[RMDB]
RNA sequence: GGGAACGACUCGAGUAGAGUCGAAAAUGGCUUGCCUCUUUGGUAGGGGAACAAUAACACUGUCACCAUAUCAGGGGAGUGGAUUGCUUUAGAGAAUCUGUAGCAUAAAUCUAAAAGUUAUCUCACAGCACAAAGGGACUUGACCAAAUAUCAUGUACAGGAGCAGUCACUUCGGUGACUGCUCCUGAAAAGAAACAACAACAACAAC
Reactivity to 2A3 in 0.01 (KOAc 150mM, MgCl2 10mM, bicine 150mM(pH8.5), 24C), signal-to-noise 1, nucleotides 027 to 156: u150g030g010c010u010u060g000c000c000u030c000u000u020u050g030g030u070a060g030g000g000g090a010a080c040a040a040u150a030a040c010a000c090u030g070u170c000a140c190c010a040u100a120u250c090a110g030g000g000g000a030g000u080g080g010a080u010u070g050c000u000u020u020a010g000a000g000a130a000u010c010u130g080u070a080g070c040a060u150a070a120a120u000c000u020a060a180a000a000g060u040u010a150u020c000u000c050a090c000a010g060c060a000c010a140a050a010g000g020g090a050c000u070u030g010a100c020c020a070a100a000u160a010u090c070a050u070g010u000a050
The data come from the RNA Mapping Database (RMDB), library OK3TST. Structure probing data (2A3) for a 207-nucleotide construct. The reactions ran in a buffer of 150 mM KOAc, 10 mM MgCl2 and 150 mM bicine (pH 8.5), at 24 C.